Chemical mapping of a 177-nucleotide RNA with 2A3 and DMS.
The DMS profile rests on 8,279 reads.
The reactions ran in a buffer of 150 mM KOAc, 10 mM MgCl2 and 150 mM bicine (pH 8.5), at 24 C.
Reactivities are given for positions 27 through 126.
It was measured as part of the RMDB library OK2TRN.
[RMDB]
RNA sequence: GGGAACGACUCGAGUAGAGUCGAAAACUGAUCUGAGAACAAAUAUUGACUCCAGAGGACAGGUACCUGAUGUGCUUACUAAGUAUCUGAAUAGGUACCACCUACAACAGCUGAUCUUAGUUUAAGCAACUAGUACCAAGUUCGCUUGGUACUAGUUAAAAGAAACAACAACAACAAC
Reactivity to 2A3 in 0.01 (KOAc 150mM, MgCl2 10mM, bicine 150mM(pH8.5), 24C), signal-to-noise 5, nucleotides 027 to 126: c010u030g020a030u010c010u050g050a030g030a250a060c060a070a170a070u260a180u200u120g030a070c020u020c050c040a030g000a020g100g030a030c070a080g020g000u020a030c010c000u020g020a070u060g040u010g010c000u060u040a280c040u120a110a000g010u030a070u160c020u040g060a100a070u140a090g000g020u020a080c000c010a010c000c000u040a040c030a120a010c020a030g030c040u040g040a060u040c000u040u060a040g030u050u080u070a030a010g030c000
Reactivity to DMS in 0.01 (KOAc 150mM, MgCl2 10mM, bicine 150mM(pH8.5), 24C), signal-to-noise 8, nucleotides 027 to 126: c040u000g000a090u000c030u010g000a110g020a050a250c060a060a120a130u000a110u000u010g010a130c050u010c060c110a140g010a050g010g000a090c110a080g010g000u000a040c010c010u000g020a120u010g020u000g000c000u000u010a080c150u000a030a020g010u000a030u010c000u000g010a150a120u010a010g000g010u010a060c080c090a060c020c010u010a060c100a060a080c220a050g010c130u000g010a050u000c050u000u010a050g000u000u000u010a070a090g020c170